Structure probing data (DMS and 2A3) for a 177-nucleotide construct. It was measured as part of the RMDB library OK2TST. Values cover nucleotides 27 to 126. The RNA was probed in 150 mM KOAc, 10 mM MgCl2 and 150 mM bicine (pH 8.5) at 24 C. For DMS the reverse transcriptase was MarathonRT.
[RMDB]
RNA sequence: GGGAACGACUCGAGUAGAGUCGAAAAUGCACAAAAAUGGUUGGCCUCAAGAUAUAAUCAACAAGGUUUUCCUUUGUUUGAUUAUCACAUCUAUACCUUCUGUGGUGAUGGUGAUUUAAUGGAAGGACCAGAGAUAUUUAUUCGUAAAUAUCUCUGGAAAAGAAACAACAACAACAAC
Reactivity to DMS in 0.01 (KOAc 150mM, MgCl2 10mM, bicine 150mM(pH8.5), 24C), signal-to-noise 5, nucleotides 027 to 126: u000g010c050a060c070a030a070a100a110a070u010g010g010u000u000g010g000c020c030u010c080a080a100g010a080u000a040u000a010a020u000c000a010a010c030a020a020g000g010u000u010u020u000c090c000u000u000u000g010u000u000u000g000a020u000u000a010u000c150a100c110a040u000c030u010a140u000a090c030c020u000u000c050u000g020u000g000g010u000g010a070u000g010g010u000g010a090u020u000u000a060a050u000g010g010a030a040g010g010a300
Reactivity to 2A3 in 0.01 (KOAc 150mM, MgCl2 10mM, bicine 150mM(pH8.5), 24C), signal-to-noise 3, nucleotides 027 to 126: u060g000c020a030c020a080a090a060a000a060u160g100g000u050u070g020g000c000c000u050c050a030a010g050a020u070a010u020a120a010u010c000a000a010c010a000a010g060g020u030u090u240u210c020c000u080u050u070g050u030u080u070g010a000u000u010a000u030c000a010c000a020u010c010u080a140u110a150c000c000u070u060c020u090g060u060g040g090u050g020a070u070g000g100u070g040a100u100u100u230a110a060u090g060g020a040a010g050g000a010